[RMDB]
RNA sequence: GGGAACGACUCGAGUAGAGUCGAAAAGAGGAGAGAGAUAUGACCGAAUUUGAAUUCAAGAAACAUGCUCUGUAGCUGCAGUAUGAAGAUGUGGGUCACAUGGCAAUGAGAUGGAGGGAAGGGAGUAACUUUAGAAAUAAUAAAGAAGUAGAAGCAAAAUCGCUAAAUAGUUCGCUAUUUAGCGAUUAAAAGAAACAACAACAACAAC
Reactivity to 2A3 in 0.01 (KOAc 150mM, MgCl2 10mM, bicine 150mM(pH8.5), 24C), signal-to-noise 3, nucleotides 027 to 156: g040a020g010g020a030g000a000g010a020g020a020u050a090u190g050a050c020c010g050a020a050u060u070u140g050a070a070u090u070c070a090a030g020a040a060a020c010a010u040g000c010u000c020u080g070u080a020g040c080u040g000c020a030g020u150a040u100g030a050a020g040a060u060g040u090g080g010g000u060c000a010c020a120u050g040g000c030a030a060u070g030a050g010a060u020g010g010a050g020g000g020a010a030g030g000g000a020g010u050a030a010c000u020u050u040a020g020a030a150a000u180a100a020u090a040a090a000g020a070a000g060u180a020g030a090a000g130c000a020a030
Reactivity to DMS in 0.01 (KOAc 150mM, MgCl2 10mM, bicine 150mM(pH8.5), 24C), signal-to-noise 2, nucleotides 027 to 156: g000a140g030g010a150g020a050g000a080g000a140u010a070u000g020a060c000c030g000a080a120u000u010u020g020a110a180u030u000c020a070a170g010a140a090a120c090a070u000g010c020u000c040u020g030u000a150g010c050u000g010c010a100g010u000a050u000g010a040a080g020a030u000g020u020g010g010g020u010c040a080c120a060u010g010g000c080a010a060u010g030a180g000a050u000g020g000a090g000g020g010a080a060g010g000g000a080g000u010a030a060c050u000u000u000a080g010a060a050a100u000a070a060u000a030a080a090g000a030a080g020u010a090g000a060a040g040c050a080a050